[RMDB]
RNA sequence: GGGAACGACUCGAGUAGAGUCGAAAAUCAUGUGCCUUCGGGCACAUGAAAACAUCCAGGAUCGCCAAAGGAUGGAAAUAAUGGCGAACCAAUAAGGAGAUAAAAGACCCGAGUUCGCUCGGGUCAACAUCAUUCCUAUGUUCGCAUAGGAAUGAUGAAAAGAAACAACAACAACAAC
Reactivity to 2A3 in 0.01 (KOAc 150mM, MgCl2 10mM, bicine 150mM(pH8.5), 24C), signal-to-noise 6, nucleotides 027 to 126: u020c000a000u000g000u000g000c000c010u020u050c230g040g010g000c000a000c000a010u000g000a000a000a000a010c020a040u000c000c010a020g000g020a030u010c010g000c020c010a070a040a080g200g040a150u230g060g110a080a090a020u160a020a060u040g000g000c000g000a010a020c010c020a020a020u230a130a070g070g020a090g020a060u170a130a170a030a030g000a000c000c000c000g000a000g000u060u090c180g010c050u000c000g000g000g000u000c000a000a000
Reactivity to DMS in 0.01 (KOAc 150mM, MgCl2 10mM, bicine 150mM(pH8.5), 24C), signal-to-noise 4, nucleotides 027 to 126: u010c010a010u000g010u000g000c000c000u000u010c180g040g010g040c010a000c000a010u000g000a020a050a120a100c120a110u010c000c010a130g010g020a050u010c020g010c000c020a050a100a150g010g020a090u020g010g010a080a090a100u000a090a170u010g010g010c000g000a010a060c030c020a070a070u010a060a130g010g010a100g010a140u010a060a070a140a090g000a020c000c000c010g000a010g010u000u010c180g000c000u000c000g000g010g000u000c000a000a060